Notes
The record gives the reactivity of an RNA of 207 nucleotides to DMS and 2A3. The RNA was probed in 150 mM KOAc, 10 mM MgCl2 and 150 mM bicine (pH 8.5) at 24 C. For 2A3, 2,932 sequencing reads were counted.
RNA sequence: GGGAACGACUCGAGUAGAGUCGAAAAUCAGAAUCAGGCCGGAGUGUUUAGCGCUCCGUAAACACGGUCGUACAUCCAGCCGGUAGCCUGGUUCCUUGCAUUGAGUGAUGGACGGAGUUUAUAGAGCAAAAGAAAGACCUGUUCGCAGGUCUUUCAACAAAGACAAAAUGUUCGCAUUUUGUCUUUGAAAAGAAACAACAACAACAAC
Reactivity to DMS in 0.01 (KOAc 150mM, MgCl2 10mM, bicine 150mM(pH8.5), 24C), signal-to-noise 3, nucleotides 027 to 156: u020c050a120g000a060a020u000c020a030g020g010c000c020g020g020a070g040u000g020u000u000u000a190g000c030g000c010u000c000c000g000u000a030a050a110c060a070c010g010g020u000c030g040u000a100c050a070u000c030c020a100g010c020c020g000g010u000a070g020c050c010u000g000g020u000u000c000c020u000u000g010c050a120u010u000g010a140g010u010g010a080u000g010g020a080c020g020g000a150g000u000u010u000a120u000a130g020a110g020c050a060a050a090a200g010a020a020a030g000a020c000c010u000g030u000u010c240g020c000a010g030g020u000c000u000u000u000c000a050a140
Reactivity to 2A3 in 0.01 (KOAc 150mM, MgCl2 10mM, bicine 150mM(pH8.5), 24C), signal-to-noise 4, nucleotides 027 to 156: u110c010a000g020a020a000u000c000a000g010g000c000c000g010g000a000g020u060g050u120u200u240a170g100c020g000c010u000c000c000g010u050a010a030a000c130a010c040g030g040u080c030g000u100a060c020a130u020c030c010a010g020c000c000g010g030u030a010g000c020c000u000g000g010u000u000c010c020u050u110g030c020a110u030u160g040a030g080u100g030a050u040g050g020a020c040g040g000a040g010u010u070u010a120u060a040g050a010g040c040a040a040a100a020g000a000a000a000g010a000c000c000u020g040u080u070c220g000c090a000g030g000u000c000u010u000u010c000a000a000
Reactivities are given for positions 27 through 156.